[RMDB]
RNA sequence: GGGAACGACUCGAGUAGAGUCGAAAAUGGUGUUGAAAGCGCCAAAACGAUUGCCAAAAUGGAUGACUUGACUAAUAUUUUCAUAACGCACUCCUUGCAUAAAUCGAUAUCCGUUAUGCAGUUGAAAAAUGCGCGUAGGAUUCGUCCUACGCGCAUUAAAAGAAACAACAACAACAAC
Reactivity to DMS in 0.01 (KOAc 150mM, MgCl2 10mM, bicine 150mM(pH8.5), 24C), signal-to-noise 1, nucleotides 027 to 126: u010g000g060u000g020u000u000g070a140a180a200g000c010g010c020c030a090a060a070a210c140g000a060u000u010g030c000c150a060a140a170a040u000g010g000a050u000g010a100c120u020u000g000a090c140u030a090a070u040a100u000u000u000u000c080a120u000a030a170c110g010c040a000c120u000c030c040u000u010g000c010a040u000a010a000a030u010c050g000a200u000a050u030c180c040g040u000u000a120u000g030c060a020g030u000u000g000a000a030a140

Source: RMDB library OK2TST, as collected in RNAgym.
Chemical mapping of a 177-nucleotide RNA with DMS.
For DMS the reverse transcriptase was MarathonRT.
Conditions: 150 mM KOAc, 10 mM MgCl2 and 150 mM bicine (pH 8.5), 24 C.
Reactivities are given for positions 27 through 126.